[RMDB]
RNA sequence: GGGAACGACUCGAGUAGAGUCGAAAACACGGGGCAAGACGUGGACGUGGAAACGCUCGAAGCGCACAACUUCGACUACUCGGCAAUCCACGAGAUGGACAUGCGCAACUUGACGACGGCGUUGGGCCUCCCGCUCGAAGCGGGCAACGUCGGUGCCGACCUACUACUUUUUCGAAAGUAGUAGGUCAAAAGAAACAACAACAACAAC
Reactivity to DMS in 0.01 (KOAc 150mM, MgCl2 10mM, bicine 150mM(pH8.5), 24C), signal-to-noise 2, nucleotides 027 to 156: c060a120c060g010g000g040g020c050a110a130g000a100c050g060u020g000g020a090c080g000u000g040g020a120a020a080c080g040c100u020c030g010a060a050g010c030g040c300a170c160a080a000c000u000u000c010g030a090c040u000a100c010u000c000g000g010c090a110a120u000c010c020a040c000g010a160g020a200u010g000g010a100c110a150u010g000c000g000c000a100a180c050u010u020g000a040c000g000a040c020g010g010c010g020u000u000g000g010g030c030c090u010c020c000c000g000c000u000c160g000a120a270g020c000g000g010g020c010a010a020c030g020u000c000g000g010u000g000c040c030
Reactivity to 2A3 in 0.01 (KOAc 150mM, MgCl2 10mM, bicine 150mM(pH8.5), 24C), signal-to-noise 5, nucleotides 027 to 156: c050a010c030g030g000g040g010c020a020a050g070a070c040g020u030g010g050a020c020g010u040g010g070a110a110a030c100g070c060u060c050g050a050a010g010c030g050c080a050c030a220a190c040u020u000c010g030a040c020u070a050c030u040c020g020g020c030a030a080u010c010c000a010c040g060a050g000a060u110g010g020a010c040a090u180g000c020g000c040a070a150c060u040u110g030a040c060g020a000c010g020g020c000g000u000u000g020g030g030c000c050u050c000c010c000g020c010u090c160g110a120a020g000c000g000g020g000c010a010a010c000g000u010c000g010g020u020g030c000c030